[RMDB]
RNA sequence: GGGAACGACUCGAGUAGAGUCGAAAAAAUCAUAAUGCAGCCCAAAUUCCGUCAAGCAACCGCCCCGCUGAGCUGGGAGAAAGCAUUCUCUGCGAUGGCUCGAUCCUUUUGGGACCGGAUCCUCAGCUGAAUCACAAGACUUCGGUCUUGUGAUUCAAAAAGAAACAACAACAACAAC
Reactivity to 2A3 in 0.01 (KOAc 150mM, MgCl2 10mM, bicine 150mM(pH8.5), 24C), signal-to-noise 2, nucleotides 027 to 126: a000a020u200c070a060u130a180a040u160g010c010a010g030c000c000c000a040a010a000u060u000c070c000g080u090c100a030a040g000c000a090a040c000c000g000c000c000c000c000g000c060u070g010a020g020c000u030g020g070g000a050g000a010a060a000g100c000a030u130u000c060u000c050u060g050c050g040a060u090g040g030c000u000c010g040a110u040c020c020u120u160u110u120g040g010g070a060c020c000g080g000a030u040c000c000u020c000a040g000c020
Reactivity to DMS in 0.01 (KOAc 150mM, MgCl2 10mM, bicine 150mM(pH8.5), 24C), signal-to-noise 2, nucleotides 027 to 126: a070a020u030c050a060u030a120a070u000g000c070a120g000c030c000c010a070a070a070u030u020c060c010g020u020c020a090a050g010c060a120a140c080c020g000c040c000c020c070g020c060u030g010a090g030c050u010g010g000g000a030g010a100a050a080g050c090a040u020u000c000u000c040u020g020c030g000a080u010g000g010c010u000c020g000a020u000c030c000u000u030u000u000g010g010g000a060c100c030g000g010a040u000c000c020u000c090a080g070c120